[RMDB]
RNA sequence: GGGAACGACUCGAGUAGAGUCGAAAAACUGAUACUUUACGAGGUAUCAGAAUGACUUCGUGGUAGAGCGCCACGAACGGAAAAUAAAGAAAGCUCGAUUGAAACGCACCGUGUACGCACGGUGCGAAAAAGUCGAUCCAGUUCGCUGGAUCGACAACCUCUUAACCUAGUUCGCUAGGUUAAGAGGAAAAGAAACAACAACAACAAC
Reactivity to 2A3 in 0.01 (KOAc 150mM, MgCl2 10mM, bicine 150mM(pH8.5), 24C), signal-to-noise 2, nucleotides 027 to 156: a000c000u000g000a000u010a000c000u010u070u130a110c250g120a090g030g000u000a000u030c000a000g030a020a030u060g020a020c010u000u010c000g010u000g000g030u020a160g040a000g000c000g010c000c000a000c020g000a000a020c040g050g020a090a040a020a020u070a010a030a050g160a040a050a010g000c010u030c040g090a170u040u280g040a080a080a000c010g000c000a000c000c030g060u110g030u100a010c140g000c110a000c000g010g000u010g000c010g000a020a010a000a000a000g000u000c000g000a000u000c000c000a020g020u060u040c060g110c100u000g010g020a000u020c000g010a000c000a000a010
Structure probing data (2A3) for a 207-nucleotide construct. The reactions ran in a buffer of 150 mM KOAc, 10 mM MgCl2 and 150 mM bicine (pH 8.5), at 24 C.